Record summary:
The record gives the reactivity of an RNA of 207 nucleotides to 2A3. Values cover nucleotides 27 to 156. Source: RMDB library OK3TST, as collected in RNAgym. 2A3 is a SHAPE reagent: it acylates the 2'-hydroxyl of flexible nucleotides of all four kinds. For 2A3 the reverse transcriptase was SuperScript II with manganese.
RNA sequence: GGGAACGACUCGAGUAGAGUCGAAAAGAUGGGGCAGGUGGGAAUAUACCUCGCCGUCCACUUGCUCCUGAUUGAGAGAUAGACGGCGAGGGUCCGAUCAUACGAUAUAUUCCUGCUCAGCGUAUGAUCGGUUAUGAUACUUAAGAAGAGCAGGCUACAGUAUUUACGUCUUCGGACGUAAAUACUGAAAAGAAACAACAACAACAAC
Reactivity to 2A3 in 0.01 (KOAc 150mM, MgCl2 10mM, bicine 150mM(pH8.5), 24C), signal-to-noise 3, nucleotides 027 to 156: g060a050u080g010g000g010g000c000a000g000g040u020g010g030g060a090a040u250a030u080a160c000c000u000c000g000c000c000g000u000c000c000a010c000u000u010g000c000u020c000c000u050g050a110u100u120g120a110g000a000g010a020u140a150g090a050c010g020g020c000g000a000g000g000g010u030c000c000g000a000u010c010a000u000a000c010g020a030u030a010u020a080u280u100c000c000u000g000c000u000c000a010g000c010g010u000a000u010g000a000u010c000g000g000u020u000a020u010g010a020u040a120c060u170u200a210a050g060a090a010g000a060g000c000a000g000g000c000u030a020